[RMDB]
The record gives the reactivity of an RNA of 177 nucleotides to DMS and 2A3. The DMS profile rests on 1,411 reads. 2A3 adducts were read by reverse transcription with SuperScript II with manganese. For 2A3, 2,309 sequencing reads were counted.
RNA sequence: GGGAACGACUCGAGUAGAGUCGAAAAGUACCAGUACGGAUCUGUCGUACUCCAUGCCAUGCAUACCAUGCAGUACCUAGGAUCGAUCUAGGAUCGACAGAGCGUGUCCAUGGGAUCUAGCACGAUCCCCUGACGUCCAAUUCGUUGGACGUCAGGGAAAAGAAACAACAACAACAAC
Reactivity to DMS in 0.01 (KOAc 150mM, MgCl2 10mM, bicine 150mM(pH8.5), 24C), signal-to-noise 3, nucleotides 027 to 126: g000u000a160c030c040a090g040u010a020c030g040g000a150u000c020u000g010u000c010g010u000a040c020u000c200c040a020u000g000c080c080a100u030g020c210a130u030a080c300c010a040u000g000c230a050g000u020a110c010c030u000a030g000g010a120u020c300g010a130u010c100u010a040g020g010a110u010c000g010a090c060a060g000a030g030c010g000u010g010u000c080c100a060u000g000g010g020a000u000c000u000a120g040c260a080c240g010a020u000c020
Reactivity to 2A3 in 0.01 (KOAc 150mM, MgCl2 10mM, bicine 150mM(pH8.5), 24C), signal-to-noise 2, nucleotides 027 to 126: g020u030a030c000c030a030g040u040a000c030g050g000a300u020c020u010g050u090c030g000u010a020c010u000c020c020a020u020g060c080c020a080u170g050c050a120u120a190c050c000a040u050g000c010a010g020u050a080c010c000u010a030g020g020a200u180c080g010a020u020c090u040a000g030g090a130u130c010g000a000c000a030g010a010g000c010g030u030g050u000c050c040a120u080g000g040g010a010u020c030u020a050g140c100a030c190g000a020u010c040